The data come from the RNA Mapping Database (RMDB), library OK2TRN. Chemical mapping of a 177-nucleotide RNA with 2A3 and DMS. Values cover nucleotides 27 to 126. In probing experiments dimethyl sulfate is read out at A N1 and C N3, which are open when not base-paired.

RNA sequence: GGGAACGACUCGAGUAGAGUCGAAAAAGGAAGGUGCUGAGCAGCACACCAGUGACCAUGAGAAAGCAGCUCAGGUCGAUCAAGAGGGUGACACGGCAGAUGCACCAGAGCAGGCUGGAGCUGGACCUCGGCUUAAAAGGUUCGCCUUUUAAGCCGAAAAAGAAACAACAACAACAAC
Reactivity to 2A3 in 0.01 (KOAc 150mM, MgCl2 10mM, bicine 150mM(pH8.5), 24C), signal-to-noise 2, nucleotides 027 to 126: a000g180g030a090a050g110g010u030g030c030u090g000a060g040c070a000g020c030a000c000a010c010c000a020g070u030g080a060c000c060a220u060g010a010g030a080a220a030g180c060a030g040c010u030c000a000g030g040u040c030g020a180u120c070a090a040g020a100g050g070g020u030g020a060c030a010c100g130g000c060a030g000a190u030g010c010a010c000c000a000g040a000g020c050a010g050g000c000u030g040g030a010g010c010u070g020g000a010c010c020
Reactivity to DMS in 0.01 (KOAc 150mM, MgCl2 10mM, bicine 150mM(pH8.5), 24C), signal-to-noise 2, nucleotides 027 to 126: a070g000g030a090a050g000g010u010g030c020u010g000a230g000c090a050g010c030a090c050a070c020c020a100g010u010g000a110c010c010a150u010g020a110g010a100a130a100g010c150a100g000c020u000c010a090g030g010u000c030g000a060u010c110a050a060g010a080g010g000g020u010g000a090c080a080c100g010g010c070a040g010a080u010g000c000a060c000c040a040g020a040g000c070a030g000g000c040u000g000g010a090g000c030u010g000g000a050c100c050